Structure probing data (2A3 and DMS) for a 177-nucleotide construct. For 2A3 the reverse transcriptase was SuperScript II with manganese. The DMS profile rests on 1,597 reads. Reactivities are given for positions 27 through 126.
RNA sequence: GGGAACGACUCGAGUAGAGUCGAAAAGUGGUCGAGUGCGAAGCACUGGGGUAGAGAAAUAAAGAGAUAGAGACCUACCCCGUCAGUCAGUCACUCUCUGUCUGAAUCUCUCUCUCAAAGACCACGAGAGCGAUCAGUAGUUCGCUACUGAUCGCUCAAAAGAAACAACAACAACAAC
Reactivity to 2A3 in 0.01 (KOAc 150mM, MgCl2 10mM, bicine 150mM(pH8.5), 24C), signal-to-noise 2, nucleotides 027 to 126: g000u000g000g000u000c010g010a010g010u010g020c150g130a130a090g010c050a080c030u020g020g020g020g020u080a000g020a000g130a110a200a020u210a070a190a000g130a010g000a010u040a090g080a000g010a020c000c000u030a020c030c000c010c020g040u030c000a000g010u000c000a000g060u080c000a100c170u010c000u050c020u010g010u000c000u000g090a130a130u030c020u000c000u000c000u000c000u000c050a120a060a050g000a000c000c000a000c050g060a060
Reactivity to DMS in 0.01 (KOAc 150mM, MgCl2 10mM, bicine 150mM(pH8.5), 24C), signal-to-noise 1, nucleotides 027 to 126: g010u000g020g000u010c000g040a010g000u000g020c040g000a040a080g000c030a030c020u000g010g000g000g040u000a000g010a000g020a010a070a090u050a070a110a220g020a000g000a050u000a000g000a020g000a090c170c070u000a120c020c020c030c000g000u060c030a090g000u000c100a040g000u060c110a160c150u040c020u000c000u000g000u000c000u000g000a040a110u000c010u010c010u000c050u000c010u000c030a070a050a170g000a000c000c000a000c000g000a070